[RMDB]
RNA sequence: GGGAACGACUCGAGUAGAGUCGAAAACUGCAGGUGCAGAGUGAUUUGCCGUGGUGGCUGGUCUGCCGGGGGACGAUUCAUAAGUUCCGCUGUGUGCCGCAUCUCACCGGGCGGCGCUUUGAGCACGUAAAUCAGGUCGGUUCGCCGACCUGAUUUAAAAAGAAACAACAACAACAAC
Reactivity to DMS in 0.01 (KOAc 150mM, MgCl2 10mM, bicine 150mM(pH8.5), 24C), signal-to-noise 1, nucleotides 027 to 126: c040u000g000c150a080g010g010u000g020c020a090g010a040g010u010g000a100u010u000u000g020c010c090g010u000g040g010u000g000g000c100u010g000g000u000c040u000g050c030c020g000g000g000g010g010a040c030g000a150u000u020c210a190u020a120a160g000u000u000c010c010g010c050u000g040u000g010u000g020c030c060g000c020a080u010c120u020c070a080c050c060g050g020g010c030g010g000c030g010c010u000u000u010g010a120g000c040a010c060g020